[RMDB]
RNA sequence: GGGAACGACUCGAGUAGAGUCGAAAAGAUGCUGAUGGCCGUCUCACCUGUAAGACCACCAUGGGUAAUAAGACCUUCUUAACAGCCUUCACUGAUGGCGCCCAGCUGGAGGCCAAUGGGCCGGAGCCCUAUCGAGAUGAUUCGUCAUCUCGAUAGGAAAAGAAACAACAACAACAAC
Reactivity to DMS in 0.01 (KOAc 150mM, MgCl2 10mM, bicine 150mM(pH8.5), 24C), signal-to-noise 7, nucleotides 027 to 126: g010a080u000g030c040u000g010a110u010g000g010c030c070g010u000c020u010c080a080c070c040u000g010u000a060a060g000a090c040c040a060c050c040a060u000g000g010g000u000a060a090u010a070a070g000a090c060c070u000u000c060u000u000a070a120c190a140g000c010c020u000u000c040a070c070u010g000a100u010g000g000c040g010c050c090c010a050g010c130u000g020g010a080g000g010c010c080a060a070u010g010g010g020c010c040g000g000a120g020c140
Reactivity to 2A3 in 0.01 (KOAc 150mM, MgCl2 10mM, bicine 150mM(pH8.5), 24C), signal-to-noise 5, nucleotides 027 to 126: g070a030u120g020c030u060g010a120u090g050g010c030c020g050u010c020u010c050a060c030c000u040g050u110a070a030g050a060c010c020a010c010c020a120u110g040g000g030u070a120a060u100a180a080g080a090c020c010u080u050c020u080u070a080a040c020a060g010c000c000u080u050c030a050c080u070g020a070u060g050g010c010g010c010c010c000a010g000c050u030g000g040a020g030g000c000c020a090a120u130g030g010g010c020c010g030g010a010g030c000